Structure probing data (2A3 and DMS) for a 207-nucleotide construct. For DMS the reverse transcriptase was MarathonRT.
[RMDB]
RNA sequence: GGGAACGACUCGAGUAGAGUCGAAAAUUUACUCUGUUGACAAAGGGAAAUCAUUGGAGGAUUUUGAGUGAAGCAAUGUGAUUAUGUCACUCAAAUUUUCAUCAAUUUGCACUGGCUUCAAUGCAGAGAAUAUGGUAGCCCAGCAAUGUGGCAAGCAACUAAUUACCCGGUUCGCCGGGUAAUUAGUAAAAGAAACAACAACAACAAC
Reactivity to 2A3 in 0.01 (KOAc 150mM, MgCl2 10mM, bicine 150mM(pH8.5), 24C), signal-to-noise 2, nucleotides 027 to 156: u020u030u030a030c000u060c010u010g070u070u080g070a030c040a030a080a070g010g000g050a040a140a080u140c070a020u060u100g070g000a070g030g010a030u010u070u000u070g010a000g010u010g010a060a000g060c010a030a080u230g060u090g160a070u110u200a060u270g060u000c000a000c020u000c000a000a010a010u040u030u040u020c010a020u040c010a010a100u050u040u120g040c010a000c060u030g030g070c030u130u090c040a110a060u070g020c020a000g020a000g040a080a030u120a070u070g160g000u070a050g020c030c020c000a000g030c060a050a100u070g010u110g060g020c110a080a000g110c020a000
Reactivity to DMS in 0.01 (KOAc 150mM, MgCl2 10mM, bicine 150mM(pH8.5), 24C), signal-to-noise 2, nucleotides 027 to 156: u000u000u010a090c000u000c000u020g020u000u010g010a120c090a060a130a140g030g000g000a090a120a040u000c030a110u010u000g030g040a130g010g000a070u000u000u000u010g010a060g030u000g020a020a070g010c070a120a160u010g050u010g050a140u000u000a090u000g000u000c030a030c000u000c010a010a010a040u000u000u000u000c030a100u000c100a070a160u000u000u000g020c060a060c050u010g010g020c120u000u000c040a040a150u000g010c020a050g010a050g010a090a080u000a000u000g010g030u000a160g000c000c000c020a230g040c100a050a160u000g000u000g060g000c030a040a070g040c050a110
Reactivities are given for positions 27 through 156. For DMS, 2,366 sequencing reads were counted. For 2A3, 958 sequencing reads were counted. Source: RMDB library OK3TST, as collected in RNAgym. For 2A3 the reverse transcriptase was SuperScript II with manganese.